[RMDB]
RNA sequence: GGGAACGACUCGAGUAGAGUCGAAAACAGUCGCGAAGCGUAAAACCGUCAUGUGCGGUGACGAGAUUAAUCGCGGCACUCGGCAGACGACCAUUACGUUUAAAAGCAUCGCUGGAGGCAGCAAAAACUGGCUAAAUUACUUCGGUAAUUUAGCCAGAAAAGAAACAACAACAACAAC
Reactivity to 2A3 in 0.01 (KOAc 150mM, MgCl2 10mM, bicine 150mM(pH8.5), 24C), signal-to-noise 1, nucleotides 027 to 126: c010a020g060u060c010g000c000g080a030a000g080c010g020u070a060a040a000a070c020c000g000u020c030a270u100g110u170g080c020g040g010u020g030a010c020g000a010g000a080u150u220a150a060u130c000g000c000g010g000c000a020c030u080c010g030g000c020a010g010a070c000g040a080c030c000a040u060u070a040c040g030u000u050u120a090a130a000a000g020c000a030u110c040g020c040u020g010g010a060g060g030c030a010g010c000a020a080a050a050a050
Reactivity to DMS in 0.01 (KOAc 150mM, MgCl2 10mM, bicine 150mM(pH8.5), 24C), signal-to-noise 2, nucleotides 027 to 126: c120a110g000u010c040g040c010g010a080a080g010c010g020u000a030a040a110a060c040c000g000u000c000a110u000g000u000g020c070g040g020u000g000a040c020g000a060g010a150u000u000a090a060u000c000g020c000g020g000c010a020c020u000c020g020g010c000a030g000a020c020g010a040c070c070a160u000u020a070c080g010u000u010u000a040a060a110a180g000c060a060u000c120g010c030u000g010g000a060g000g020c030a030g030c150a070a050a050a100a140